Conditions: 150 mM KOAc, 10 mM MgCl2 and 150 mM bicine (pH 8.5), 24 C. The record gives the reactivity of an RNA of 177 nucleotides to 2A3 and DMS. Reactivities are given for positions 27 through 126.
RNA sequence: GGGAACGACUCGAGUAGAGUCGAAAAGCCCAUAUGUUCGCAUAUGGGCAAAAGCAGAUCUGAGCAUGCGAGCUCUCUGCGAGAAAAGUCAACGCAAUAAAAAAACACGUCACUUCGGUGACGUGAACUUAUUGAAGAACUUCGGUUCUUCAAUAAGAAAAGAAACAACAACAACAAC
Reactivity to 2A3 in 0.01 (KOAc 150mM, MgCl2 10mM, bicine 150mM(pH8.5), 24C), signal-to-noise 6, nucleotides 027 to 126: g010c010c000c010a000u010a000u000g000u010u060c200g000c130a000u010a010u010g000g010g000c020a040a040a000a010g000c000a010g010a050u080c090u230g010a000g000c020a040u140g050c050g090a040g010c000u000c010u000c000u000g000c010g010a060g040a020a100a010a000g110u100c060a060a090c030g020c050a040a080u210a230a130a020a000a000a010a010c000a010c000g000u000c000a000c000u030u070c230g100g000u010g000a000c000g000u000g000a000a010
Reactivity to DMS in 0.01 (KOAc 150mM, MgCl2 10mM, bicine 150mM(pH8.5), 24C), signal-to-noise 5, nucleotides 027 to 126: g020c000c000c000a010u000a000u000g010u000u010c220g020c010a010u000a000u000g000g010g010c000a000a010a050a100g010c000a020g010a100u010c200u010g010a020g020c000a050u010g030c060g010a200g000c010u000c010u000c000u000g000c000g000a150g000a090a080a060a060g000u010c090a040a090c020g010c070a090a120u040a020a010a060a080a080a080a140c000a000c000g000u000c000a000c000u010u010c170g020g010u000g010a000c000g010u000g010a010a070
Record summary
It was measured as part of the RMDB library M2PK50.